[RMDB]
RNA sequence: GGGAACGACUCGAGUAGAGUCGAAAAGCAACAUAGAUCGUUCUAUUAACGAACACGCGCGGAUCGUCGGUGGUCGGCGAGCCCACGGACGUACUUGAUCGCGCGAACGACUAAAAAUCGCCGGCAACCACUACUGGGAGUUCGCUCCCAGUAGUGGAAAAGAAACAACAACAACAAC
Reactivity to DMS in 0.01 (KOAc 150mM, MgCl2 10mM, bicine 150mM(pH8.5), 24C), signal-to-noise 1, nucleotides 027 to 126: g000c040a060a150c100a200u000a030g020a080u000c000g010u000u020c030u000a240u010u000a120a150c170g010a050a110c120a120c120g000c030g000c010g010g010a010u000c000g010u000c010g000g040u060g000g040u000c010g000g000c020g000a020g000c260c000c000a000c000g010g010a050c000g010u000a030c240u000u000g010a050u010c000g060c000g000c010g000a000a010c020g000a080c030u000a020a020a020a070a030u000c000g010c010c000g060g000c200a040a160
Reactivity to 2A3 in 0.01 (KOAc 150mM, MgCl2 10mM, bicine 150mM(pH8.5), 24C), signal-to-noise 2, nucleotides 027 to 126: g080c070a020a090c030a060u170a020g130a130u020c010g000u020u010c030u060a180u270u220a200a080c090g050a020a040c060a030c110g010c000g000c020g050g070a100u030c000g030u000c030g160g010u020g040g000u000c030g000g020c010g040a050g100c020c010c000a000c010g080g000a000c000g030u070a040c030u070u240g140a060u270c000g010c000g010c000g010a000a000c000g030a000c010u050a000a040a060a000a140u030c000g000c000c010g000g080c020a050a110